[RMDB]
RNA sequence: GGGAACGACUCGAGUAGAGUCGAAAACUUGAUAUUUGUCCAGUUCCAAAAGGACGAUUGGAGAAUCUACAGUUGUUUUAUUGGCUCUGGCAAGAGAACGCUUGGCUUCUUCUAACUUGCCUACUUCCACAAGAUAUCUUGGAGAUUCAGGAACACAAUGAUCUGCACUAUUCGUAGUGCAGAUCAUAAAAGAAACAACAACAACAAC
Reactivity to 2A3 in 0.01 (KOAc 150mM, MgCl2 10mM, bicine 150mM(pH8.5), 24C), signal-to-noise 3, nucleotides 027 to 156: c040u050u110g060a080u120a160u230u120u060g140u030c010c020a010g020u070u010c020c020a100a070a020a030g020g010a020c020g050a050u030u110g070g000a080g030a100a150u080c070u120a060c030a050g010u020u020g020u030u060u030u040a070u080u040g010g020c020u040c040u040g000g000c010a040a000g020a000g030a120a020c060g000c070u030u090g040g000c000u050u000c000u040u020c020u100a120a180c040u040u030g010c010c000u030a050c030u050u040c000c040a020c020a070a030g020a120u100a050u160c010u020u060g060g000a030g020a040u080u070c020a040g020g050a100a010c080a000c030a110
Reactivity to DMS in 0.01 (KOAc 150mM, MgCl2 10mM, bicine 150mM(pH8.5), 24C), signal-to-noise 2, nucleotides 027 to 156: c090u010u010g030a180u020a060u000u000u010g050u000c000c000a110g000u000u000c070c060a040a070a210a240g010g020a040c020g010a030u000u000g020g000a300g010a110a060u000c070u000a040c040a030g030u010u000g010u020u000u000u000a140u010u000g010g000c050u000c040u000g010g040c040a040a060g000a070g000a060a040c050g010c050u010u000g020g000c050u000u000c030u000u010c030u010a050a090c030u000u010g020c030c020u000a050c090u010u010c010c050a050c050a030a090g000a100u010a090u000c060u000u000g000g010a100g020a120u000u000c050a090g020g010a090a070c040a060c140a060
An RNA of 207 nucleotides, treated with 2A3 and DMS and read out base by base.
For 2A3 the reverse transcriptase was SuperScript II with manganese.
The RNA was probed in 150 mM KOAc, 10 mM MgCl2 and 150 mM bicine (pH 8.5) at 24 C.